[RMDB]
RNA sequence: GGGAACGACUCGAGUAGAGUCGAAAACAGAAUUGGUAAAUGCAGAAGCAGCAAAAUAACCAAAAGUAAUGACUUUCGUUUUAAUUUCUUAAGAUGAAAUAUAAAUGAAAACCUGUUAUACAUAGGACAGUAAAUUAGUUUUCGAACUAAUUUACUGAAAAGAAACAACAACAACAAC
Reactivity to DMS in 0.01 (KOAc 150mM, MgCl2 10mM, bicine 150mM(pH8.5), 24C), signal-to-noise 4, nucleotides 027 to 126: c030a080g000a120a090u000u010g020g010u010a080a160a090u010g010c020a090g000a140a130g000c240a050g010c020a030a030a050a080u010a130a050c020c010a020a030a100a150g000u020a040a050u010g020a130c100u000u000u000c010g010u020u000u010u000a070a050u000u010u000c000u000u040a120a140g000a080u030g000a020a030a010u010a110u020a010a020a010u000g000a020a010a030a070c080c040u010g010u010u010a080u030a060c080a030u020a050g010g000a300
Reactivity to 2A3 in 0.01 (KOAc 150mM, MgCl2 10mM, bicine 150mM(pH8.5), 24C), signal-to-noise 8, nucleotides 027 to 126: c020a020g110a120a130u060u030g020g000u030a030a040a030u040g000c020a020g060a300a060g090c130a020g010c020a020a030a090a270u100a060a080c010c000a020a020a060a040g090u100a090a120u110g060a040c030u020u020u010c000g020u010u000u010u020a070a070u030u040u020c030u060u160a160a120g060a230u140g000a020a010a000u090a000u020a030a020a010u020g010a010a010a020a030c020c010u010g030u080u090a150u030a110c050a050u120a040g020g060a040